Chemical mapping of a 177-nucleotide RNA with DMS and 2A3.
Values cover nucleotides 27 to 126.
Values are in units of 0.01, from 0 to 300, in steps of 10.
For DMS the reverse transcriptase was MarathonRT.
The 2A3 profile rests on 844 reads.
For DMS, 1,857 sequencing reads were counted.
[RMDB]
RNA sequence: GGGAACGACUCGAGUAGAGUCGAAAAUUGAUUGUAUCGCUAUUUCUAGCGAAGAUCGUGGUCAAGGUCAACGUGUAUACAUGGAAGCAUAUACUUCUGACAAAAACUUAGUUAUGCGAGCAUAUACUAUGAAACAGGCAUUCGUGCCUGUUUCAUAAAAAGAAACAACAACAACAAC
Reactivity to DMS in 0.01 (KOAc 150mM, MgCl2 10mM, bicine 150mM(pH8.5), 24C), signal-to-noise 2, nucleotides 027 to 126: u020u000g010a010u010u000g000u020a090u000c010g000c000u000a060u010u000u000c210u000a040g020c010g000a030a040g000a000u000c010g000u000g000g020u000c050a070a070g000g010u000c080a040a090c190g020u000g000u000a050u000a050c100a110u000g010g020a070a300g010c030a000u000a040u010a000c020u000u000c100u000g000a080c110a060a040a060a120a140c080u000u000a020g000u000u010a030u000g000c040g010a160g000c050a040u000a020u010a010c140
Reactivity to 2A3 in 0.01 (KOAc 150mM, MgCl2 10mM, bicine 150mM(pH8.5), 24C), signal-to-noise 1, nucleotides 027 to 126: u020u020g010a020u080u040g090u150a220u060c000g030c000u010a050u090u300u040c110u100a000g000c020g000a020a000g020a000u080c020g060u060g050g000u000c000a020a070g020g000u010c020a060a020c080g040u070g000u060a050u030a070c010a080u050g020g000a000a000g040c080a010u060a000u020a110c000u070u080c050u020g060a080c030a000a110a040a120a090c010u030u070a000g000u010u040a000u020g020c010g000a030g010c010a030u020a000u030a070c010